[RMDB]
RNA sequence: GGGAACGACUCGAGUAGAGUCGAAAAUGCGGUCGAUAUAUUGUUUCUGCACGACUGCAUCCGGCGUCACACUGCGAAAGCUCGAGACGAAGCUUCCGAGAGUGGCGCGCACCACGCGCGGGUCGGCCAGUAGGUCCCUAUUCGUAGGGACCUACUGAAAAGAAACAACAACAACAAC
Reactivity to DMS in 0.01 (KOAc 150mM, MgCl2 10mM, bicine 150mM(pH8.5), 24C), signal-to-noise 3, nucleotides 027 to 126: u010g030c040g000g000u000c020g000a140u050a050u010a250u030u000g000u020u020u010c040u000g010c170a060c050g000a050c030u010g010c010a040u010c020c030g000g020c020g050u000c000a050c000a180c000u000g000c030g030a010a000a010g000c000u000c000g010a230g000a140c180g020a160a010g000c010u000u000c030c020g010a040g000a040g010u000g000g000c010g000c020g010c060a060c060c110a090c160g000c070g010c000g000g020g000u010c010g020g040c080
Reactivity to 2A3 in 0.01 (KOAc 150mM, MgCl2 10mM, bicine 150mM(pH8.5), 24C), signal-to-noise 7, nucleotides 027 to 126: u050g010c010g000g020u020c040g060a030u050a020u020a070u230u130g080u030u040u010c070u100g030c060a050c160g010a000c000u010g000c010a010u020c020c050g080g000c000g030u050c030a020c010a010c040u230g060c040g020a040a020a000g000c000u020c040g230a230g070a150c130g040a140a020g000c000u010u010c010c010g030a020g000a000g040u010g000g000c000g000c000g000c000a050c050c030a080c060g030c010g000c040g040g020g010u050c020g020g050c010